Structure probing data (2A3 and DMS) for a 207-nucleotide construct. The DMS profile rests on 3,891 reads. The 2A3 profile rests on 3,413 reads. Conditions: 150 mM KOAc, 10 mM MgCl2 and 150 mM bicine (pH 8.5), 24 C. Values cover nucleotides 27 to 156.

[RMDB]
RNA sequence: GGGAACGACUCGAGUAGAGUCGAAAAGCACAUCUCGCCGAUGUUGCACCACAAACUGAUUACAUUUGCUUUGUUACUUGGGCUCACCAGCUUGAGCUCGCAACAAUGCGCUAUUUUGUAAAACUUGGUAUUGAGGAGCGAUGCUAUUGUGGCCGGCUCAUAAGCAGGCGUUCGCGCCUGCUUAUGAAAAAGAAACAACAACAACAAC
Reactivity to 2A3 in 0.01 (KOAc 150mM, MgCl2 10mM, bicine 150mM(pH8.5), 24C), signal-to-noise 5, nucleotides 027 to 156: g020c020a010c000a040u020c040u090c090g100c060c040g010a010u030g030u120u100g020c030a050c000c020a030c020a020a130a050c090u170g040a130u100u070a030c020a080u050u070u200g020c020u040u010u020g010u020u050a090c060u130u210g020g000g000c010u020c030a030c050c140a130g090c140u050u040g010a000g000c000u010c010g020c000a000a050c010a010a020u060g000c040g000c070u100a080u210u170u070u090g060u080a020a030a050a140c060u050u070g030g000u050a060u050u100g040a080g010g020a030g050c020g010a010u050g010c010u050a050u130u070g000u030g010g020c030c020g030g000c010
Reactivity to DMS in 0.01 (KOAc 150mM, MgCl2 10mM, bicine 150mM(pH8.5), 24C), signal-to-noise 2, nucleotides 027 to 156: g020c040a040c020a020u000c030u000c100g060c110c090g000a160u000g020u010u000g000c030a150c050c010a090c070a060a050a120c060u010g050a230u010u000a050c010a040u000u000u010g020c000u000u000u010g020u000u000a060c030u000u010g030g010g000c010u000c010a040c080c080a260g000c120u000u000g010a020g020c000u020c030g020c000a000a020c020a000a050u000g000c010g030c180u020a060u020u000u000u000g030u010a070a030a070a080c070u000u000g030g010u010a090u010u000g010a110g030g000a070g020c040g000a100u000g000c030u000a130u000u000g010u000g030g030c030c020g000g000c210